[RMDB]
RNA sequence: GGGAACGACUCGAGUAGAGUCGAAAAAGCUCGAGACGAAUAAAGGCGAGAAGAGAUGCGAAAGAAAGAAAGUAUCUCGAUCGCCGAAUAAAUACUCUCUGAAGUCGAUCGAGCGAGAGAGAGGAAAGGGUACAUACUAGUUCGCUAGUAUGUACCCAAAAGAAACAACAACAACAAC
Reactivity to DMS in 0.01 (KOAc 150mM, MgCl2 10mM, bicine 150mM(pH8.5), 24C), signal-to-noise 5, nucleotides 027 to 126: a110g020c000u000c000g000a010g000a070c050g030a130a090u050a080a140a150g010g000c010g010a020g000a160a120g000a000g000a010u000g000c010g020a080a130a110g030a140a130a150g000a180a140a190g000u000a000u000c000u000c010g000a300u010c010g010c000c000g010a040a050u010a050a050a100u010a130c030u000c000u010c010u010g000a100a050g000u010c020g000a170u000c010g000a000g000c000g000a060g000a060g010a000g000a040g000g020a100a090a080
Reactivity to 2A3 in 0.01 (KOAc 150mM, MgCl2 10mM, bicine 150mM(pH8.5), 24C), signal-to-noise 3, nucleotides 027 to 126: a000g010c010u010c000g040a060g090a160c030g010a150a080u250a110a160a000g020g000c010g000a000g040a260a000g000a010g010a000u000g010c000g030a020a150a190g160a140a120a000g210a000a100a030g190u010a000u000c000u000c000g020a020u000c000g000c010c010g010a000a000u020a000a000a010u160a000c000u040c000u000c000u080g050a110a020g110u080c010g030a020u050c000g000a000g000c000g000a000g000a000g010a010g000a000g000g120a000a100a030

This 177-nucleotide RNA was probed chemically with DMS and 2A3. For DMS the reverse transcriptase was MarathonRT. Reactivities are given for positions 27 through 126. It was measured as part of the RMDB library OK1LIB. The reactions ran in a buffer of 150 mM KOAc, 10 mM MgCl2 and 150 mM bicine (pH 8.5), at 24 C.